[RMDB]
RNA sequence: GGGAACGACUCGAGUAGAGUCGAAAAUGAUAUGAUAUUGUUCAGCAAAGACUUAAAUGCAAAUAAGAAAAUCAUAACAACACUCAAGAAACAAUACGAUACAAAGAUAAUAAAUCUGGGUGAAAGAGUAAUGAGUGAGUUUCGACUCACUCAUUACAAAAGAAACAACAACAACAAC
Reactivity to DMS in 0.01 (KOAc 150mM, MgCl2 10mM, bicine 150mM(pH8.5), 24C), signal-to-noise 1, nucleotides 027 to 126: u000g050a170u010a030u000g000a000u000a070u000u010g000u000u000c060a170g070c030a060a080a160g000a050c200u010u000a040a090a160u010g010c020a110a110a070u010a010a160g000a080a170a070a000u000c090a040u000a020a060c020a100a190c060a000c010u000c050a020a160g000a110a030a090c100a110a080u000a000c050g040a030u000a110c130a060a130a040g000a100u040a080a030u000a080a040a060u040c040u000g010g020g040u040g000a020a100a080g000a090
Reactivity to 2A3 in 0.01 (KOAc 150mM, MgCl2 10mM, bicine 150mM(pH8.5), 24C), signal-to-noise 1, nucleotides 027 to 126: u020g020a020u030a000u080g010a010u010a050u070u080g050u020u020c020a010g000c010a010a070a000g050a180c110u240u230a050a140a100u070g000c010a050a050a100u060a060a010g020a120a070a020a000u000c000a020u000a050a000c040a010a080c000a010c000u000c090a140a070g050a110a230a020c030a080a090u110a160c030g060a000u020a170c030a050a180a050g040a110u140a130a030u070a030a150a030u010c000u000g000g000g050u060g030a130a070a030g070a020

Structure probing data (DMS and 2A3) for a 177-nucleotide construct.
DMS adducts were read by reverse transcription with MarathonRT.
Conditions: 150 mM KOAc, 10 mM MgCl2 and 150 mM bicine (pH 8.5), 24 C.
For DMS, 662 sequencing reads were counted.